[RMDB]
RNA sequence: GGGAACGACUCGAGUAGAGUCGAAAAACUAUUUGUUCUAUAGCAAACAAACCCGAAACACAGGAUAUAUUUGUUAUAUAUGCUUUGUGGUACACAGCUGUUAGGACAUGAGCCAUCAGGGUCCAAAAUCCAUAGUACCGUUCGCGGUACUAUGGAUAAAAGAAACAACAACAACAAC
Reactivity to DMS in 0.01 (KOAc 150mM, MgCl2 10mM, bicine 150mM(pH8.5), 24C), signal-to-noise 3, nucleotides 027 to 126: a180c080u020a120u020u010u010g000u010u000c050u000a020u010a030g020c040a070a130a090c150a090a110a090c040c020c080g000a140a060a030c050a000c080a050g010g000a010u000a010u000a000u010u020u020g000u030u020a030u000a010u000a010u010g000c000u000u010u010g050u000g000g020u010a090c190a070c260a070g010c030u020g010u010u010a060g000g000a000c030a010u000g090a030g000c060c070a060u020c060a050g000g000g020u000c020c060a100a020a080
Reactivity to 2A3 in 0.01 (KOAc 150mM, MgCl2 10mM, bicine 150mM(pH8.5), 24C), signal-to-noise 6, nucleotides 027 to 126: a000c110u110a130u110u070u030g020u020u000c030u030a060u070a050g020c070a060a020a100c040a040a110a030c030c030c030g080a050a090a000c020a000c010a030g040g030a010u000a000u000a020u060u140u120g190u300u010a000u010a010u010a010u050g150c020u080u100u100g030u020g000g030u050a030c040a010c040a080g030c020u020g060u130u050a010g000g020a010c010a060u050g020a000g040c040c000a010u070c070a070g070g030g080u010c010c000a010a070a060
An RNA of 177 nucleotides, treated with DMS and 2A3 and read out base by base. Conditions: 150 mM KOAc, 10 mM MgCl2 and 150 mM bicine (pH 8.5), 24 C. The 2A3 profile rests on 4,153 reads.